Chemical mapping of a 207-nucleotide RNA with 2A3. Conditions: 150 mM KOAc, 10 mM MgCl2 and 150 mM bicine (pH 8.5), 24 C. The data come from the RNA Mapping Database (RMDB), library VIROID.
RNA sequence: GGGAACGACUCGAGUAGAGUCGAAAAUAGAAAGGCUAAGAACGUCGCAAUGACGUAAGGUGGGACUUUUCCUUCUGGAACCAAGCGGUUGGUUCCGAGGGGGGUGUGAUCCAGGUACCGCCGUAGAAACUGGAUUACGACGUCUACCCGGGAUUCAGAAUGGUUCUACCUUCGGGUAGAACCAUUCAAAAGAAACAACAACAACAAC
Reactivity to 2A3 in 0.01 (KOAc 150mM, MgCl2 10mM, bicine 150mM(pH8.5), 24C), signal-to-noise 1, nucleotides 027 to 156: u120a010g040a000a010a030g050g030c040u030a020a020g030a010a010c050g020u060c030g060c150a080a080u220g050a050c030g020u020a040a020g000g030u070g000g060g000a030c030u130u130u010u090c000c010u050u090c150u200g010g000a000a000c000c000a010a000g060c060g200g050u040u070g010g000u010u030c010c010g000a050g000g000g030g000g080g020u120g000u010g040a030u000c000c030a000g030g010u060a030c030c000g000c070c030g050u090a020g060a170a190a060c020u000g000g000a030u030u070a000c040g070a030c020g080u080c060u030a090c010c040c010g070g000g000a070u080u110c000a010